[RMDB]
RNA sequence: GGGAACGACUCGAGUAGAGUCGAAAACUUAGUGAGUUCGCUCACUAAGGGACUCUGGAACCGAGGCUGGAGAGGGACCAAGUAGGAGGCUGGGCACCACCAACAUUCAGCGCUUCGGCGCUGAAAAGUGGAUAGUAAGGUUCGCCUUACUAUCCACAAAAGAAACAACAACAACAAC
Reactivity to DMS in 0.01 (KOAc 150mM, MgCl2 10mM, bicine 150mM(pH8.5), 24C), signal-to-noise 3, nucleotides 027 to 126: c010u000u000a000g010u000g010a020g010u000u020c220g020c000u010c000a010c000u000a000a010g010g000g000a090c060u000c020u000g000g010a130a120c100c040g010a060g020g010c040u000g010g000a060g010a060g020g000g000a080c070c060a040a070g020u000a060g000g010a060g010g000c050u010g010g000g010c070a100c060c040a070c050c060a080a070c120a180u000u000c010a000g000c000g010c000u000u010c200g030g010c010g000c000u000g000a000a000a050a100

This 177-nucleotide RNA was probed chemically with DMS. The reactions ran in a buffer of 150 mM KOAc, 10 mM MgCl2 and 150 mM bicine (pH 8.5), at 24 C. DMS adducts were read by reverse transcription with MarathonRT.